An RNA of 177 nucleotides, treated with 2A3 and DMS and read out base by base.
The DMS profile rests on 1,496 reads.
RNA sequence: GGGAACGACUCGAGUAGAGUCGAAAAGUAGCCGAGCAGCGCCGGUGAGGCCAGGUGCACCACGUCAGGUUCGAAUCCCCGCAAGACCCGCAGGAUUCGCGGGGUUGGCACCCCCAGCGGCAGGGUGGUGGAUUACUGGGUUCGCCCAGUAAUCCACAAAAGAAACAACAACAACAAC
Reactivity to 2A3 in 0.01 (KOAc 150mM, MgCl2 10mM, bicine 150mM(pH8.5), 24C), signal-to-noise 2, nucleotides 027 to 126: g090u130a000g000c000c000g000a020g010c070a000g040c000g000c030c010g060g020u120g040a080g050g060c000c000a040g040g030u040g020c000a000c040c000a050c070g080u040c050a020g020g050u020u030c050g000a000a050u040c010c000c000c000g080c080a080a040g030a200c000c000c020g010c040a100g180g000a150u140u110c000g000c000g020g000g010g000u010u090g080g000c030a050c040c000c000c000c000a000g100c010g100g000c040a010g060g000g020u090g060
Reactivity to DMS in 0.01 (KOAc 150mM, MgCl2 10mM, bicine 150mM(pH8.5), 24C), signal-to-noise 1, nucleotides 027 to 126: g000u060a150g000c040c000g000a110g000c080a170g000c010g050c020c000g040g040u030g000a120g000g000c000c030a050g000g060u010g020c010a090c020c060a060c100g000u020c140a160g040g000u000u020c050g000a070a140u040c010c000c030c140g000c020a110a150g000a090c030c000c000g050c150a090g000g000a120u010u020c150g010c020g020g010g000g010u020u020g010g020c070a030c040c030c030c030c020a090g050c050g030g000c140a160g000g010g030u030g050